[RMDB]
Structure probing data (DMS and 2A3) for a 207-nucleotide construct. Reactivities are rounded to 0.1 and cut off at 0 and 3. It was measured as part of the RMDB library OK3TST. The RNA was probed in 150 mM KOAc, 10 mM MgCl2 and 150 mM bicine (pH 8.5) at 24 C.

RNA sequence: GGGAACGACUCGAGUAGAGUCGAAAAUCGACGAAAUCCGUGAUGCCUUGGUUGACCUGCACUCGGCAGGUUGUGACAUCAUCACGAUUACCCAAUAUCUUCGUCCUGGCCCGAUGUACCAUCCCAUCGAUCGUUGGGUAAAACCUGAGGAAUUUAACCGAUAUUACGUAUUCGUACGUAAUAUCGGAAAAGAAACAACAACAACAAC
Reactivity to DMS in 0.01 (KOAc 150mM, MgCl2 10mM, bicine 150mM(pH8.5), 24C), signal-to-noise 3, nucleotides 027 to 156: u000c050g020a120c040g010a050a070a230u010c050c050g020u000g010a020u010g000c060c020u010u050g040g010u000u000g000a030c010c000u000g020c010a240c130u000c240g040g020c010a010g020g000u000u000g010u010g000a060c030a050u000c010a040u000c020a050c040g010a170u000u000a090c020c010c010a070a060u000a080u000c060u000u000c020g030u010c010c070u000g020g020c010c020c030g000a110u000g000u000a030c040c000a100u010c030c010c020a150u030c110g020a080u010c040g020u000u000g010g000g020u000a010a050a070a170c040c010u010g000a100g020g000a120a130u000u000u000a070a300
Reactivity to 2A3 in 0.01 (KOAc 150mM, MgCl2 10mM, bicine 150mM(pH8.5), 24C), signal-to-noise 9, nucleotides 027 to 156: u090c010g010a000c030g010a040a020a020u060c070c010g010u010g000a000u010g020c100c130u090u100g100g000u070u180g040a010c000c000u010g010c030a080c190u180c110g200g000c010a000g000g000u000u020g050u090g030a010c000a010u040c000a000u000c000a010c000g020a010u030u070a060c000c000c000a010a020u140a050u060c080u040u010c020g020u020c000c040u050g040g000c010c010c030g060a060u080g050u110a060c030c060a080u050c020c010c000a020u040c050g070a030u040c050g050u040u020g000g000g020u040a040a060a010a030c030c070u110g050a070g040g110a100a090u250u250u240a100a060